[RMDB]
RNA sequence: GGGAACGACUCGAGUAGAGUCGAAAAGUGAAACAACUAACCAGACGCACGUUUUUAACCGAUUUCCCGAACAUCAGAUAUUGGUUCGUCCGCCUGCCUUAAAUAUAACAUCCGUCAGUGAAAACGUGCCGGCAGUGACAGAUCACGGAGUGGUGCCAUAACGUGCACUUUUCGAAGUGCACGUUAUAAAAGAAACAACAACAACAAC
Reactivity to 2A3 in 0.01 (KOAc 150mM, MgCl2 10mM, bicine 150mM(pH8.5), 24C), signal-to-noise 2, nucleotides 027 to 156: g080u060g030a110a080a000c060a060a100c060u100a000a110c010c020a040g060a060c050g030c010a040c010g000u000u040u030u060u070a090a100c070c050g020a030u050u060u020c010c010c000g030a030a050c090a120u170c040a060g110a110u080a040u140u090g050g000u040u020c020g060u030c010c010g030c010c010u010g000c010c000u090u070a020a140a010u190a040u040a170a060c040a050u050c030c050g030u020c060a060g010u010g070a010a040a050a010c000g000u000g000c020c020g010g000c000a020g000u000g080a010c010a090g010a030u050c010a030c060g030g000a060g040u020g010g000u040g030c000c010
Reactivity to DMS in 0.01 (KOAc 150mM, MgCl2 10mM, bicine 150mM(pH8.5), 24C), signal-to-noise 2, nucleotides 027 to 156: g030u000g030a100a110a080c070a080a160c040u010a090a110c040c050a200g030a040c110g010c040a030c000g020u000u030u010u000u000a030a060c040c020g030a170u010u000u000c010c100c000g010a100a100c090a090u010c030a030g010a130u000a070u000u000g040g010u010u000c010g030u000c010c030g030c020c000u010g000c040c050u000u010a020a080a190u000a180u010a070a080c080a060u000c050c020g020u000c020a080g020u010g010a060a060a010a030c000g010u000g020c000c030g000g010c050a060g020u000g020a060c040a090g000a100u000c000a060c050g050g000a160g040u000g010g020u000g000c020c090

Chemical mapping of a 207-nucleotide RNA with 2A3 and DMS. For 2A3, 1,264 sequencing reads were counted. For 2A3 the reverse transcriptase was SuperScript II with manganese. It was measured as part of the RMDB library OK3TST. The RNA was probed in 150 mM KOAc, 10 mM MgCl2 and 150 mM bicine (pH 8.5) at 24 C.